Conditions: 150 mM KOAc, 10 mM MgCl2 and 150 mM bicine (pH 8.5), 24 C. An RNA of 207 nucleotides, treated with 2A3 and DMS and read out base by base. For DMS the reverse transcriptase was MarathonRT. 2A3 adducts were read by reverse transcription with SuperScript II with manganese. The data come from the RNA Mapping Database (RMDB), library M2RFPK.

RNA sequence: GGGAACGACUCGAGUAGAGUCGAAAAGAAAUUACGUUUCCUUUACACUUCUCAAAGCGGGAUCAAGAGAAGCAAAGCAUCCCUCAUAUCCACGAUGGAGGGUGUCGUGGAGUAUACUGUACCAAAAAGAGCGAACACGGCUUCGGCCGUGUUCGAACUUCUAAUAUGGCUUCGGCCAUAUUAGAAGAAAAGAAACAACAACAACAAC
Reactivity to 2A3 in 0.01 (KOAc 150mM, MgCl2 10mM, bicine 150mM(pH8.5), 24C), signal-to-noise 3, nucleotides 027 to 156: g020a000a060a020u200u110a050c050g010u020u020u030c000c000u000u010u060a070c070a030c020u040u020c010u020c040a120a130a020g080c100g030g060g010a070u060c080a150a040g020a010g020a070a000g030c100a050a040a010g010c010a060u040c010c030c000u060c040a050u100a060u080c010c010a010c010g010a020u050g130g020a050g030g040g010u030g000u000c010g000u000g000g000a010g000u010a010u020a070c080u080g080u150a080c020c060a010a090a050a040a060g110a050g050c020g010a000a000c000a000c000g000g060c020u050u060c130g050g000c020c000g010u010g000u000u000c000g000a000a000
Reactivity to DMS in 0.01 (KOAc 150mM, MgCl2 10mM, bicine 150mM(pH8.5), 24C), signal-to-noise 1, nucleotides 027 to 156: g000a060a070a070u000u000a100c130g010u000u000u010c010c030u020u020u010a150c060a090c000u010u010c000u010c010a070a120a170g000c040g060g040g010a020u000c040a040a300g000a060g000a040a080g000c020a030a110a140g040c060a150u000c000c000c000u010c040a060u000a010u010c020c060a040c000g000a070u000g010g000a090g000g010g010u000g000u000c010g030u000g050g020a110g020u000a090u000a080c100u020g000u000a140c100c070a060a060a110a110a150g000a250g020c040g010a010a000c010a030c000g000g010c020u000u020c300g110g010c000c000g110u000g010u010u000c020g000a000a040